[RMDB]
The record gives the reactivity of an RNA of 177 nucleotides to DMS and 2A3.
DMS adducts were read by reverse transcription with MarathonRT.
Source: RMDB library OK2TRN, as collected in RNAgym.
The 2A3 profile rests on 47,937 reads.
RNA sequence: GGGAACGACUCGAGUAGAGUCGAAAAGGAUCCUAUCUCGUGGUAACUGGCUGUACAUCAGUUACCAGUGAGUAGGUAUUCACUAUGUGUCAAUGAUGUACAGGUUGACAUAUAGAGAAUAGGAUCGCUACUGCUUACUAUUCGUAGUAAGCAGUAGAAAAGAAACAACAACAACAAC
Reactivity to DMS in 0.01 (KOAc 150mM, MgCl2 10mM, bicine 150mM(pH8.5), 24C), signal-to-noise 9, nucleotides 027 to 126: g000g000a010u000c000c010u000a090u000c000u000c000g020u000g000g010u000a010a010c000u000g010g010c120u010g010u010a080c170a110u000c000a010g000u000u000a000c000c010a160g000u010g010a010g020u000a100g020g020u010a020u000u000c010a130c000u000a010u000g020u000g000u000c010a040a050u000g010a130u000g010u000a060c150a060g000g010u000u000g010a010c010a010u000a010u000a020g000a050g000a020a030u000a060g010g000a020u000c000g000
Reactivity to 2A3 in 0.01 (KOAc 150mM, MgCl2 10mM, bicine 150mM(pH8.5), 24C), signal-to-noise 9, nucleotides 027 to 126: g020g000a000u000c000c000u000a020u030c000u000c000g020u010g000g000u000a000a000c000u000g050g000c040u110g120u270a050c020a090u040c000a030g000u000u000a000c000c000a000g000u040g000a000g010u040a060g050g110u080a050u010u010c000a000c010u000a010u010g010u000g000u000c010a010a020u050g080a100u130g100u240a110c040a060g170g030u000u000g000a000c000a000u010a000u010a010g020a000g000a010a010u010a010g000g000a000u000c000g000